[RMDB]
RNA sequence: GGGAACGACUCGAGUAGAGUCGAAAAGGGGUCUCCCUCGACGAUCUUCCUAAACAGCAUCGAUCUAUACUGAAGCCUCCACGGUAUAGGGAGCUGUGGGAAGGGAGAGGGAGACGGAGGCACCCAAAACGCCCAUCCUGUUCGCAGGAUGGGCGAAGGGAUUAUCUUUGUUCGCAAAGAUAAUCCCAAAAGAAACAACAACAACAAC
Reactivity to 2A3 in 0.01 (KOAc 150mM, MgCl2 10mM, bicine 150mM(pH8.5), 24C), signal-to-noise 3, nucleotides 027 to 156: g000g030g070g050u010c000u000c000c000c000u000c000g300a300c010g000a000u020c000u010u020c020c010u150a300a300a080c020a010g050c010a030u300c100g010a000u020c010u010a000u010a010c010u030g040a090a030g000c000c000u000c010c000a000c010g000g000u000a000u010a010g010g000g000a010g010c000u000g010u030g010g000g000a000a010g000g000g010a020g000a000g000g010g000a010g000a000c000g000g010a020g000g000c000a040c000c010c020a040a110a000a000c020g010c020c000c000a000u000c000c000u050g040u070u100c290g040c140a000g000g000a000u000g000g010g000c000g000a000a000